[RMDB]
RNA sequence: GGGAACGACUCGAGUAGAGUCGAAAAGCCAUGAGUCGCAACGCAAAGCCGCGGCAAGUGGAGUUAGCGAUAAGAGACUAGGCUUUGGUUUCUUCAAGUGAAGCGGUCACCAAUCAGGUGUGGUAGUAGGAGCCUGCAUGGUUCGCCAUGCAGGCAAUGAUCAUUUCCAGUUCGCUGGAAAUGAUCAAAAAGAAACAACAACAACAAC
Reactivity to DMS in 0.01 (KOAc 150mM, MgCl2 10mM, bicine 150mM(pH8.5), 24C), signal-to-noise 1, nucleotides 027 to 156: g000c000c000a100u000g000a290g000u000c020g020c010a100a130c020g070c040a120a210a290g020c000c000g000c010g020g030c060a050a270g010u000g000g000a160g020u000u000a200g000c020g020a110u000a020a160g000a080g000a060c010u000a070g040g010c060u000u030u000g000g020u010u000u000c020u020u000c090a050a090g040u020g000a050a150g000c080g020g020u000c020a040c070c020a040a120u000c070a090g100g040u000g020u040g060g010u030a020g050u010a170g000g010a190g000c000c000u000g030c000a060u000g000g000u000u000c300g050c050c000a040u000g000c000a030g000g040c000a000a000
Reactivity to 2A3 in 0.01 (KOAc 150mM, MgCl2 10mM, bicine 150mM(pH8.5), 24C), signal-to-noise 1, nucleotides 027 to 156: g000c010c000a050u120g170a010g050u010c010g030c040a040a070c030g070c130a190a080a070g000c060c020g050c000g040g020c130a050a050g070u060g050g020a010g020u070u140a020g030c010g030a040u030a260a050g050a010g000a010c020u030a030g000g050c000u010u020u030g010g000u010u030u000c000u100u100c030a060a060g000u030g130a090a000g000c060g000g030u070c000a020c040c000a000a190u160c070a020g100g000u020g000u000g070g030u110a100g080u000a040g050g170a010g030c020c020u010g030c000a000u000g000g000u020u030c030g030c170c000a000u000g000c000a010g000g000c000a000a000
An RNA of 207 nucleotides, treated with DMS and 2A3 and read out base by base. For DMS, 1,694 sequencing reads were counted. The RNA was probed in 150 mM KOAc, 10 mM MgCl2 and 150 mM bicine (pH 8.5) at 24 C. 2A3 adducts were read by reverse transcription with SuperScript II with manganese.